Source: RMDB library RFM100, as collected in RNAgym. This 177-nucleotide RNA was probed chemically with DMS and 2A3. For DMS the reverse transcriptase was MarathonRT. The RNA was probed in 150 mM KOAc, 10 mM MgCl2 and 150 mM bicine (pH 8.5) at 24 C. For DMS, 2,432 sequencing reads were counted.
[RMDB]
RNA sequence: GGGAACGACUCGAGUAGAGUCGAAAAUGAUAUGACAGCCUAAUAGAUGAUAUGAUUAUUUCAGUUGUCUUUGUUUGGAUAUCACAUUAACUGAUUGUAAAAUCAGUGUCAAAGCCCGGCUUGCCGGGGAGUACGCGAGGUUCGCCUCGCGUACUCCAAAAGAAACAACAACAACAAC
Reactivity to DMS in 0.01 (KOAc 150mM, MgCl2 10mM, bicine 150mM(pH8.5), 24C), signal-to-noise 2, nucleotides 027 to 126: u000g030a150u000a020u020g010a050c050a080g000c030c030u000a050a060u040a030g000a040u000g000a020u000a080u000g000a020u000u080a070u010u010u000c030a040g000u020u000g000u000c010u020u000u000g000u000u020u000g000g000a010u020a050u010c000a020c200a120u010u020a070a020c000u000g000a000u000u010g040u060a030a060a000a010u000c000a000g000u010g000u020c170a030a120a170g030c070c000c000g000g000c040u010u000g000c010c000g010g000
Reactivity to 2A3 in 0.01 (KOAc 150mM, MgCl2 10mM, bicine 150mM(pH8.5), 24C), signal-to-noise 3, nucleotides 027 to 126: u090g000a020u010a030u090g120a120c100a040g040c000c010u150a190a100u130a100g000a010u020g020a030u070a090u180g050a090u130u110a200u110u220u000c000a000g010u030u030g030u000c000u050u030u050g110u130u070u040g060g010a010u010a000u010c020a030c010a110u030u210a090a000c010u000g000a020u000u030g120u150a070a000a000a090u000c010a010g010u000g040u040c020a010a090a050g120c000c000c000g000g000c090u100u080g040c030c010g000g000